[RMDB]
The record gives the reactivity of an RNA of 177 nucleotides to DMS and 2A3.
It was measured as part of the RMDB library OK2TST.
The DMS profile rests on 1,014 reads.
The RNA was probed in 150 mM KOAc, 10 mM MgCl2 and 150 mM bicine (pH 8.5) at 24 C.

RNA sequence: GGGAACGACUCGAGUAGAGUCGAAAAUGGUGACCAAUCGGUCAAGCUUUCAGCUCUACGGGUUCUCCAUGGACAUGAAGCAUGGGCCAUGCUGGAAGAGGGUAAGGAAGCAUUUCUUGCGUUUAGACACGUGCCACUGAUUCGUCAGUGGCACGUGAAAAGAAACAACAACAACAAC
Reactivity to DMS in 0.01 (KOAc 150mM, MgCl2 10mM, bicine 150mM(pH8.5), 24C), signal-to-noise 1, nucleotides 027 to 126: u010g010g020u000g000a000c010c010a210a100u000c220g020g040u010c000a140a140g030c130u000u000u000c000a060g000c000u000c040u000a060c080g010g040g000u000u010c020u020c070c040a080u000g000g020a110c090a040u000g010a080a100g010c060a030u000g000g030g010c170c010a030u000g000c070u000g030g000a080a060g000a130g000g000g000u000a060a060g000g000a050a050g030c160a140u000u000u000c050u020u000g000c050g000u000u000u000a100g000a300
Reactivity to 2A3 in 0.01 (KOAc 150mM, MgCl2 10mM, bicine 150mM(pH8.5), 24C), signal-to-noise 1, nucleotides 027 to 126: u170g060g060u000g010a040c000c060a130a300u290c260g000g000u010c010a030a000g060c020u000u020u010c000a000g040c000u030c040u120a070c060g070g070g000u070u070c050u020c000c010a040u010g000g010a060c020a160u110g150a210a040g100c010a010u050g000g070g000c000c020a020u020g000c040u150g030g070a050a010g030a070g080g060g000u060a030a000g020g070a090a020g020c090a050u030u170u100c040u060u110g040c020g120u060u140u100a070g020a000